[RMDB]
RNA sequence: GGGAACGACUCGAGUAGAGUCGAAAAAAUGGUUGUCAAUGGAAUGAAUAUACAUGUAGAUAUGCAGCACAAAAUGGACAUUUAGAAUGUUUGCAAUAUGCACAUGAAAAUGAUUGUCCUUGGGAUAGAUCUACUAGCGAUUCGUCGCUAGUAGAUCAAAAGAAACAACAACAACAAC
Reactivity to DMS in 0.01 (KOAc 150mM, MgCl2 10mM, bicine 150mM(pH8.5), 24C), signal-to-noise 3, nucleotides 027 to 126: a080a040u010g020g000u000u020g020u000c030a080a070u020g010g010a130a020u000g000a210a070u010a070u000a170c030a020u000g010u010a090g010a030u000a020u000g000c040a040g000c040a060c130a050a030a060a060u000g010g020a090c130a040u010u000u000a070g000a140a080u000g020u000u000u010g030c010a050a090u000a040u000g010c030a050c020a010u000g000a100a070a030a060u000g000a120u000u000g010u000c000c000u020u000g000g010g010a100u000a100
Reactivity to 2A3 in 0.01 (KOAc 150mM, MgCl2 10mM, bicine 150mM(pH8.5), 24C), signal-to-noise 1, nucleotides 027 to 126: a010a010u130g070g040u100u050g110u050c020a000a080u040g020g000a100a010u010g080a070a000u080a010u040a160c000a000u010g010u000a000g010a050u060a000u080g050c040a000g080c080a000c000a030a070a010a040u120g090g120a020c010a070u010u130u000a120g020a080a030u030g070u100u170u060g010c020a000a000u010a080u170g030c000a020c000a030u040g040a020a070a070a090u100g010a070u090u070g060u020c030c000u010u050g110g000g050a060u090a110